[RMDB]
RNA sequence: GGGAACGACUCGAGUAGAGUCGAAAACGAAACAGGCGAUGCUAAGUCCGUGAAGCCGUUCCGGACCCUUCGGGGAAUGGAAAGUGGUGGAGCCGACGGACCAGACUUGCAGUAGGUGAGUGAUGGGGAUGUGAGACUAAUUCGUUAGUCUCACAUCAAAAGAAACAACAACAACAAC
Reactivity to 2A3 in 0.01 (KOAc 150mM, MgCl2 10mM, bicine 150mM(pH8.5), 24C), signal-to-noise 4, nucleotides 027 to 126: c010g020a010a000a010c020a000g040g010c020g030a020u030g010c020u040a050a000g010u000c000c000g020u050g020a010a000g010c000c010g020u010u000c000c000g000g000a020c010c010c000u050u100c190g080g000g000g000a000a010u010g000g000a030a010a020g300u300g020g030u010g010g010a010g000c000c020g010a000c000g010g010a000c000c000a010g020a040c000u020u020g000c020a020g040u080a020g020g080u070g050a080g050u160g040a090u150g040g010g040
Reactivity to DMS in 0.01 (KOAc 150mM, MgCl2 10mM, bicine 150mM(pH8.5), 24C), signal-to-noise 9, nucleotides 027 to 126: c050g010a130a120a160c080a040g000g020c010g010a300u010g010c020u000a090a270g000u010c000c170g010u000g000a290a250g010c010c010g010u000u000c000c000g010g000a300c010c000c000u000u010c100g010g010g010g000a010a220u030g000g000a000a020a020g000u010g020g020u000g000g010a280g010c030c200g000a020c000g000g000a090c300c020a020g010a250c020u000u010g000c040a090g000u000a050g010g010u000g000a090g010u000g000a090u010g010g000g010

Annotation:
Chemical mapping of a 177-nucleotide RNA with 2A3 and DMS. For DMS, 11,914 sequencing reads were counted. For 2A3, 12,309 sequencing reads were counted.